[RMDB]
RNA sequence: GGGAACGACUCGAGUAGAGUCGAAAAACGCACAUAAGUACAAACCAGUCGCCGUAUCCAGCGCUGGCCAGGACUUCCCGCACAUGCGACUUGGGCAUGCCGUUCAGGUGGGUGCGCAGCAGCUGGACCAUGGCUGGCUAUUCGUAGCCAGCCAUGGAAAAGAAACAACAACAACAAC
Reactivity to DMS in 0.01 (KOAc 150mM, MgCl2 10mM, bicine 150mM(pH8.5), 24C), signal-to-noise 1, nucleotides 027 to 126: a050c070g000c050a020c010a180u040a050a080g040u050a040c020a060a090a130c000c110a050g000u000c000g010c010c190g010u040a190u000c020c040a020g020c000g000c000u000g010g000c020c030a090g090g130a090c110u060u000c000c000c000g040c240a050c110a030u000g000c010g000a020c020u000u000g000g000g060c030a000u010g000c070c050g000u000u060c160a020g000g020u000g000g000g080u000g000c010g010c030a020g030c060a150g010c020u060g000g050a160
Reactivity to 2A3 in 0.01 (KOAc 150mM, MgCl2 10mM, bicine 150mM(pH8.5), 24C), signal-to-noise 3, nucleotides 027 to 126: a000c010g020c040a030c000a040u240a090a060g090u140a150c090a050a090a010c010c000a010g010u020c020g030c010c080g100u100a080u070c000c000a010g000c010g000c000u030g010g010c000c000a030g000g000a040c030u090u040c020c010c010g040c020a130c000a050u130g020c010g000a020c020u020u110g000g020g000c010a010u100g040c000c020g140u180u190c120a060g000g000u000g030g010g010u050g010c020g000c000a020g010c000a030g000c000u010g000g000a000